Structure probing data (2A3 and DMS) for a 177-nucleotide construct. The data come from the RNA Mapping Database (RMDB), library OK1LIB. For 2A3 the reverse transcriptase was SuperScript II with manganese.

RNA sequence: GGGAACGACUCGAGUAGAGUCGAAAAACUCGAAAUCGAAAUGGGAGCAGGUUUGAAAAAGGAUCUUAGAGUGUCUAGGGUUGGGCCAGGAGGGUCUCUUAACGCCUUCUUUUUUCUUCUCAUCGGACACUAAGCUUAUGUUCGCAUAAGCUUAGUGAAAAGAAACAACAACAACAAC
Reactivity to 2A3 in 0.01 (KOAc 150mM, MgCl2 10mM, bicine 150mM(pH8.5), 24C), signal-to-noise 8, nucleotides 027 to 126: a000c030u040c030g030a040a030a110u110c040g060a070a090a090u150g030g010g020a050g020c050a040g030g100u080u110u160g140a080a050a000a010a020g070g010a020u020c050u090u140a080g040a050g090u100g040u020c030u050a040g050g050g000u090u080g050g020g000c000c000a010g040g040a040g010g030g020u000c020u010c000u100u110a060a030c030g040c020c000u050u040c000u100u060u010u010u000u020c030u040u000c020u010c010a130u060c040g030g010a010
Reactivity to DMS in 0.01 (KOAc 150mM, MgCl2 10mM, bicine 150mM(pH8.5), 24C), signal-to-noise 5, nucleotides 027 to 126: a060c020u000c020g010a080a100a090u030c090g010a050a110a060u020g010g000g020a090g020c080a030g000g000u020u020u030g020a040a060a040a100a120g000g000a020u010c030u020u020a060g000a110g000u020g010u000c030u010a080g010g000g000u000u010g010g000g030c040c080a090g010g000a030g000g000g000u010c020u000c070u030u020a080a050c230g000c040c010u000u000c000u000u000u010u010u020u010c050u010u000c010u020c030a080u000c060g000g000a230